[RMDB]
RNA sequence: GGGAACGACUCGAGUAGAGUCGAAAAAGCGCGCAUACUACGGUAUGCGCGCAAUCAGAAAUCGGGAAUGAUGUUCUCCCCUGGUAUUCCAAAACCGCUGUUUCGCUGAUGACGUCUGCUUUUUUAAUCACCACCGUUUGGUUCGCCAAACGGUGAACGAGACAAUUAACUUCGGUUAAUUGUCUCGAAAAGAAACAACAACAACAAC
Reactivity to 2A3 in 0.01 (KOAc 150mM, MgCl2 10mM, bicine 150mM(pH8.5), 24C), signal-to-noise 1, nucleotides 027 to 156: a000g010c010g020c020g050c040a000u000a000c000u020a030c140g060g020u000a010u020g010c070g130c000g000c000a000a000u020c010a000g120a020a190a020u110c050g030g010g030a060a130u120g050a030u070g090u130u020c010u030c040c000c030c010u010g030g040u030a130u060u110c040c000a000a030a000a140c080c050g030c080u090g030u000u060u080c020g010c020u080g000a020u030g000a070c040g030u000c030u020g070c040u090u060u020u000u030u140a140a120u060c050a070c100c000a000c000c000g000u000u030u010g020g020u030u000c150g000c040c000a000a000a000c000g000g000u000g000a000a000